RNA sequence: GGGAACGACUCGAGUAGAGUCGAAAACGGGCGCCCUGUUGCGCCUGAUGCGCAGCAAUUUCGAGCUGUCCCGGGAAACCGCGAUGAAUACCGAGAGCAUGCUGCAAUUGCUCGGCGCUUCGGCCUAUAGCAGUAGUGCAUUCGUGCACUACUGCUAAAAAGAAACAACAACAACAAC
Reactivity to 2A3 in 0.01 (KOAc 150mM, MgCl2 10mM, bicine 150mM(pH8.5), 24C), signal-to-noise 1, nucleotides 027 to 126: c000g000g010g030c020g050c030c000c130u190g180u290u180g010c010g020c000c010u000g020a020u060g020c020g000c000a000g000c000a030a000u050u030u060c030g130a060g000c050u020g000u040c000c000c000g000g000g000a050a040a000c060c010g100c140g150a170u170g050a060a070u100a080c000c000g020a040g000a010g130c040a030u110g000c060u000g010c010a040a070u000u030g010c020u020c080g150g000c020g000c000u050u120c030g050g000c020c010u050a110
Reactivity to DMS in 0.01 (KOAc 150mM, MgCl2 10mM, bicine 150mM(pH8.5), 24C), signal-to-noise 2, nucleotides 027 to 126: c070g000g010g010c010g050c020c050c210u030g020u000u010g020c020g020c010c020u020g020a020u010g010c080g040c000a060g000c000a030a030u010u000u000c070g000a070g010c020u000g000u000c000c010c000g010g000g000a080a140a260c100c060g000c210g000a120u000g010a090a090u000a190c020c010g000a070g030a110g000c030a060u010g000c010u000g000c170a050a020u000u010g000c010u000c210g030g030c000g000c040u000u000c060g040g000c010c010u010a110